[RMDB]
RNA sequence: GGGAACGACUCGAGUAGAGUCGAAAACAUUUUCUCAAUUGGCCCGGUUUCCCUGCAUUGGUAUGGCCUGAUGUACUUGGUGGGCUUCGUCUUCGCUAUGUGGUUGGCGGUUCGUCGGGCCAAUAAGCGCAAGACUAGUUUUCGAACUAGUCUUGCGAAAAGAAACAACAACAACAAC
Reactivity to 2A3 in 0.01 (KOAc 150mM, MgCl2 10mM, bicine 150mM(pH8.5), 24C), signal-to-noise 1, nucleotides 027 to 126: c000a020u090u100u070u010c000u020c060a000a100u010u010g000g000c020c000c000g000g000u050u050u050c050c030c030u050g030c090a060u090u080g040g010u110a110u210g110g040c000c000u020g050a050u010g010u040a050c040u040u060g070g010u020g020g080g010c000u070u020c010g010u000c010u080u070c070g000c130u080a120u300g100u080g040g130u000u040g000g070c000g040g010u050u000c000g000u000c000g030g000g000c040c000a010a000u060a000a020g080
Reactivity to DMS in 0.01 (KOAc 150mM, MgCl2 10mM, bicine 150mM(pH8.5), 24C), signal-to-noise 1, nucleotides 027 to 126: c170a120u010u010u010u000c020u010c050a130a070u000u000g000g020c010c000c020g010g020u000u000u000c070c000c010u000g010c050a070u000u010g000g030u000a080u020g010g000c060c060u000g000a060u010g030u010a040c160u030u020g030g020u010g010g000g020c160u010u000c090g020u000c040u000u000c000g040c040u000a070u030g040u000g040g020u020u000g010g010c080g010g010u010u000c070g020u000c020g020g030g030c000c020a000a010u030a070a090g000